[RMDB]
RNA sequence: GGGAACGACUCGAGUAGAGUCGAAAAGCAUGGGGAAACGUCUUGGUGCGGCGGAUGUGGAUAAAUGGGCGCUGUAUGUCAUCGGCCAGUACUGCGACCAGUCAGUGCCGGACGGCUUUGGCGGCACAAUAAACCGUGGAUUCGUCCACGGUUUAUUAAAAGAAACAACAACAACAAC
Reactivity to 2A3 in 0.01 (KOAc 150mM, MgCl2 10mM, bicine 150mM(pH8.5), 24C), signal-to-noise 2, nucleotides 027 to 126: g040c030a020u050g010g000g020g040a050a060a040c050g050u030c030u070u100g070g000u100g000c050g000g010c010g030g000a050u070g030u090g070g070a050u070a110a150a080u060g010g010g000c020g010c020u010g040u070a070u130g070u020c010a070u050c030g000g010c000c000a030g010u060a020c010u010g020c000g060a090c040c050a010g030u040c010a020g010u010g070c020c000g050g000a040c050g010g000c000u120u050u030g030g000c010g000g000c020a010c010
Reactivity to DMS in 0.01 (KOAc 150mM, MgCl2 10mM, bicine 150mM(pH8.5), 24C), signal-to-noise 6, nucleotides 027 to 126: g010c050a070u000g000g000g000g000a060a100a120c100g000u010c060u000u000g020g020u000g020c070g000g010c060g000g000a070u000g020u000g010g000a090u010a030a090a110u000g010g010g000c020g020c050u000g000u000a050u000g010u010c050a080u000c050g010g020c020c020a140g010u000a030c040u000g010c100g010a100c110c040a080g010u010c020a140g010u000g010c000c020g000g000a030c040g010g000c110u000u000u010g010g020c010g000g000c040a060c100
This 177-nucleotide RNA was probed chemically with 2A3 and DMS. For DMS, 11,249 sequencing reads were counted. 2A3 adducts were read by reverse transcription with SuperScript II with manganese. DMS adducts were read by reverse transcription with MarathonRT. DMS (dimethyl sulfate) methylates the pairing face of unpaired adenines and cytosines. The data come from the RNA Mapping Database (RMDB), library OK2TRN. For 2A3, 3,413 sequencing reads were counted.